Structure probing data (2A3 and DMS) for a 177-nucleotide construct. High 2A3 reactivity points to a flexible backbone, as in loops and unpaired stretches.
[RMDB]
RNA sequence: GGGAACGACUCGAGUAGAGUCGAAAAUUGUACUCACCAGCUGGCUAAUAUCAUAAUUAACAAAGUUGCUACUAUGUCUGCAAAGUUUAAUCGAAUAAUUUGCCAGUGAUAUGAUGACAUUGUCACACAUACCAGUAAUCUUCGGAUUACUGGUAUGAAAAGAAACAACAACAACAAC
Reactivity to 2A3 in 0.01 (KOAc 150mM, MgCl2 10mM, bicine 150mM(pH8.5), 24C), signal-to-noise 5, nucleotides 027 to 126: u030u020g000u030a070c010u000c010a030c020c010a010g010c000u010g000g000c010u020a010a030u040a030u060c040a040u030a220a030u070u030a020a010c020a060a250a030g120u040u000g110c000u010a070c030u150a140u300g170u140c080u040g000c010a000a010a050g020u050u060u070a020a010u030c000g030a060a010u090a110a090u030u000u030g000c000c000a020g000u000g030a020u020a010u120g050a060u070g010a010c040a070u050u150g070u080c010a020c000a000
Reactivity to DMS in 0.01 (KOAc 150mM, MgCl2 10mM, bicine 150mM(pH8.5), 24C), signal-to-noise 6, nucleotides 027 to 126: u010u010g020u010a080c050u000c000a040c050c180a300g020c010u000g000g000c010u000a020a030u000a060u000c140a080u010a110a020u000u000a010a030c050a080a080a110g020u000u000g000c000u000a080c090u010a130u000g010u000c150u000g000c010a020a030a090g000u000u000u000a020a030u000c120g010a090a050u010a060a050u000u000u000g010c000c020a020g010u000g010a100u000a180u010g000a020u000g010a030c040a050u000u010g020u000c080a100c160a150